[RMDB]
RNA sequence: GGGAACGACUCGAGUAGAGUCGAAAAUGUUGAUUUUCUUAGGCAUGAUAAUGUAGAAGUCUUUUUCUUAGGAGAUGCAUGAUGAAGUGUUUAGGAGUGAAAUGUCAUCAUAUUUGUAGCUUACUUUCAAAUGGCUCAGCAAAAAGUGUGUGUGAGAUCGUGCCUAAAUGUUCGCAUUUAGGCACGAAAAAGAAACAACAACAACAAC
Reactivity to 2A3 in 0.01 (KOAc 150mM, MgCl2 10mM, bicine 150mM(pH8.5), 24C), signal-to-noise 2, nucleotides 027 to 156: u080g000u010u020g030a160u010u020u070u020c050u050u050a060g010g100c030a030u020g030a030u110a070a050u130g090u050a090g030a180a080g050u010c020u050u050u040u020u030c120u060u120a030g010g030a040g000a040u060g010c030a010u020g030a020u030g000a050a040g040u000g000u200u060u120a050g020g010a070g000u010g020a050a130a010u110g010u020c010a000u010c010a030u090a120u120u070u080g030u030a020g010c000u040u030a030c010u050u180u020c030a070a090a090u040g030g000c000u010c020a060g020c020a070a020a030a000a050g030u050g000u010g000u020g000u040g020a030g010a040
Structure probing data (2A3) for a 207-nucleotide construct. It was measured as part of the RMDB library OK3TST.